Source: RMDB library OK2TST, as collected in RNAgym. This 177-nucleotide RNA was probed chemically with DMS and 2A3. 2A3 is a SHAPE reagent: it acylates the 2'-hydroxyl of flexible nucleotides of all four kinds. Reactivities are given for positions 27 through 126. The RNA was probed in 150 mM KOAc, 10 mM MgCl2 and 150 mM bicine (pH 8.5) at 24 C. For DMS the reverse transcriptase was MarathonRT.
RNA sequence: GGGAACGACUCGAGUAGAGUCGAAAACAGGUGCCAGCUGACGUGGCCCUGGAGGACCUGAUCCGGCUGGCAGAGCUGAUGCAGCCGGCACCGUCCCCUGCCACCGGCGAGGAAAGCGGCAACGGGCACUAUGGGACGCAUUCGUGCGUCCCAUAGUAAAAGAAACAACAACAACAAC
Reactivity to DMS in 0.01 (KOAc 150mM, MgCl2 10mM, bicine 150mM(pH8.5), 24C), signal-to-noise 2, nucleotides 027 to 126: c150a070g010g020u010g030c000c010a060g010c030u000g020a140c080g030u000g030g020c100c080c040u010g020g000a170g000g000a120c020c020u000g000a160u010c040c030g010g000c090u000g020g010c030a020g000a100g000c120u010g000a060u020g000c000a070g000c010c040g010g030c050a010c110c070g020u000c020c020c010c010u010g010c020c000a080c030c040g020g000c050g020a140g000g010a060a140a140g010c060g000g010c060a050a060c070g000g010g030c050
Reactivity to 2A3 in 0.01 (KOAc 150mM, MgCl2 10mM, bicine 150mM(pH8.5), 24C), signal-to-noise 1, nucleotides 027 to 126: c030a030g040g050u030g060c020c000a040g000c040u080g030a110c050g080u060g030g020c010c000c010u020g020g050a160g010g030a120c010c040u080g050a140u090c000c000g030g000c030u090g110g170c080a030g040a000g030c050u120g040a090u170g050c000a000g000c020c000g010g010c000a000c000c010g010u070c000c010c020c000u010g000c000c020a080c030c040g070g000c080g030a070g000g110a080a110a040g050c000g030g000c000a020a000c050g040g000g000c030

For DMS, 1,930 sequencing reads were counted.